[RMDB]
Notes:
An RNA of 177 nucleotides, treated with DMS and 2A3 and read out base by base. For 2A3 the reverse transcriptase was SuperScript II with manganese. The reactions ran in a buffer of 150 mM KOAc, 10 mM MgCl2 and 150 mM bicine (pH 8.5), at 24 C. High DMS reactivity at an A or C suggests that its Watson-Crick edge is free. It was measured as part of the RMDB library OK2TRN. For DMS, 16,531 sequencing reads were counted.
RNA sequence: GGGAACGACUCGAGUAGAGUCGAAAAGAUGAAGGUCAUCGACUCCAGCGAACUUCCGGAAUAUGUCAAAGAUGGCUGGCUUGAUCAUCCAUCAAAGCUGCUGCCCGUGGAAGCAGAUGAUGUUAAGACUAGCUGUUAAAUUCGUUUAACAGCUAGUAAAAGAAACAACAACAACAAC
Reactivity to DMS in 0.01 (KOAc 150mM, MgCl2 10mM, bicine 150mM(pH8.5), 24C), signal-to-noise 9, nucleotides 027 to 126: g010a050u000g010a130a090g000g010u000c020a060u000c050g010a100c090u000c010c040a080g010c030g000a060a100c070u000u000c060c040g020g010a110a110u010a060u000g010u000c070a070a080a100g010a030u000g010g000c040u000g010g000c160u000u010g010a080u000c020a050u000c040c020a030u000c020a050a090a150g010c010u000g000c010u000g000c030c020c130g010u000g010g000a080a040g000c030a040g010a070u010g000a060u000g010u010u010a090a100g000
Reactivity to 2A3 in 0.01 (KOAc 150mM, MgCl2 10mM, bicine 150mM(pH8.5), 24C), signal-to-noise 6, nucleotides 027 to 126: g050a020u110g060a080a060g120g030u030c030a030u040c050g040a060c030u000c010c020a030g030c020g040a070a030c010u070u020c060c010g040g100a140a090u240a110u220g120u100c050a080a030a030g030a030u080g000g000c010u010g010g000c020u090u080g030a110u100c010a030u000c040c000a000u010c000a010a120a050g040c010u040g000c020u020g010c010c020c040g090u140g040g040a050a010g000c010a010g000a050u090g010a020u070g060u190u150a110a020g050